[RMDB]
RNA sequence: GGGAACGACUCGAGUAGAGUCGAAAAGGGGUCUCCGUUGAAAGAAACGACAUGGAGAAUCAUACUGAAGCCUCCACGGUAUGACUCCAACAGCGUUUCUGGAGGAGACGGAGGCACCCAAAACUAAGUUAGAUUCCUUCGGGAAUCUAACUUAGAACAUCCCUAUUGCGUUCGCGCAAUAGGGAUGAAAAGAAACAACAACAACAAC
Reactivity to 2A3 in 0.01 (KOAc 150mM, MgCl2 10mM, bicine 150mM(pH8.5), 24C), signal-to-noise 2, nucleotides 027 to 156: g090g050g020g020u000c000u000c000c010g080u100u010g040a050a030a050g010a010a010a000c020g090a040c160a290u300g030g060a020g030a180a160u020c010a010u000a000c000u030g050a160a050g020c030c010u040c000c020a010c040g000g000u010a000u010g000a010c010u010c000c030a130a080c080a120g040c000g000u000u010u020c010u020g010g000a040g010g050a030g010a000c000g000g000a010g010g000c020a190c000c010c000a020a180a010a000c000u000a000a010g000u000u010a000g010a010u010u020c070c090u110u180c300g070g000g000a000a000u000c000u000a000a000c000u000u000a000g000a000a000
Conditions: 150 mM KOAc, 10 mM MgCl2 and 150 mM bicine (pH 8.5), 24 C. Structure probing data (2A3) for a 207-nucleotide construct.